[RMDB]
RNA sequence: GGGAACGACUCGAGUAGAGUCGAAAAGAAGUGCAUGUUUACAAUUACAACUACAAACACGAUCCUGAAGACGCCGCUAUAAAGUUAGGUUGUGUUGCGCAAGAAUUUCACGGUGUGUAUGCUGAUAAAUUAGGCAUAAUCAAAAAGGGUGUGACUAGUUCUAACGCUAUUUCGAUAGCGUUAGAACAAAAGAAACAACAACAACAAC
Reactivity to DMS in 0.01 (KOAc 150mM, MgCl2 10mM, bicine 150mM(pH8.5), 24C), signal-to-noise 1, nucleotides 027 to 156: g000a070a090g040u010g060c020a090u000g000u000u010u020a090c080a220a110u000u010a080c060a090a060c020u000a060c040a170a130a080c050a060c070g000a050u000c000c050u020g010a100a090g020a110c080g000c020c000g020c080u000a120u000a070a120a070g010u000u010a080g020g060u000u010g080u000g020u000u000g010c030g130c000a010a010g030a030a120u000u000u020c020a020c080g010g040u000g010u000g060u010a070u000g030c000u000g000a170u010a070a070a130u000u000a180g000g000c000a040u000a020a100u010c040a050a090a160a090a070g020g030g010u000g000u000g020a080c050u010a210
Reactivity to 2A3 in 0.01 (KOAc 150mM, MgCl2 10mM, bicine 150mM(pH8.5), 24C), signal-to-noise 2, nucleotides 027 to 156: g070a040a000g020u080g090c040a110u040g080u100u170u030a080c060a120a160u180u040a080c030a270a020c050u110a020c040a000a130a000c020a000c040g020a010u050c000c020u070g020a020a000g070a050c030g000c030c010g000c030u030a050u100a300a110a060g100u110u180a020g030g000u020u010g000u000g000u010u020g010c000g000c020a000a080g070a060a060u030u060u140c050a000c060g000g000u030g000u000g020u030a030u030g040c000u000g040a070u040a240a080a020u170u120a050g010g000c000a010u070a030a080u090c030a020a010a010a000a010g030g000g040u020g030u010g020a010c010u090a070